[RMDB]
RNA sequence: GGGAACGACUCGAGUAGAGUCGAAAAUAGCGAAGUAGGAUUUUAUGCGUCAAGUGUUCACAGGCUGGGGAGUCGCCGUGAAACGAAAAGCAGAAAGCGUGCUGCUUACGAUAUAAUUUCCGCACCCCCCAAUCGAAUCAUUCGUGAUUCGAUUGGGAAAAGAAACAACAACAACAAC
Reactivity to 2A3 in 0.01 (KOAc 150mM, MgCl2 10mM, bicine 150mM(pH8.5), 24C), signal-to-noise 5, nucleotides 027 to 126: u180a020g080c060g050a110a000g080u120a050g030g070a050u040u010u010u060a050u050g010c020g000u010c050a030a020g000u070g060u130u010c010a010c020a050g040g000c010u070g020g010g050g020a050g090u120c020g020c010c010g030u030g000a020a010a020c020g010a000a040a030a020g000c010a030g080a070a130a020g130c110g100u160g070c020u010g000c000u000u010a030c010g010a000u010a010u000a140a050u020u030u030c000c000g000c010a060c010c020c000
Reactivity to DMS in 0.01 (KOAc 150mM, MgCl2 10mM, bicine 150mM(pH8.5), 24C), signal-to-noise 2, nucleotides 027 to 126: u020a050g000c080g000a060a070g000u000a100g000g000a070u030u000u000u040a010u000g020c010g020u010c170a020a100g000u020g000u000u000c000a050c030a140g020g010c050u010g000g010g000g000a050g000u000c090g000c030c010g000u030g040a020a050a000c010g000a050a060a090a050g000c030a010g000a080a050a110g000c190g000u020g020c010u000g000c000u000u000a080c030g010a090u010a000u020a040a140u000u000u000c020c020g030c160a180c000c040c040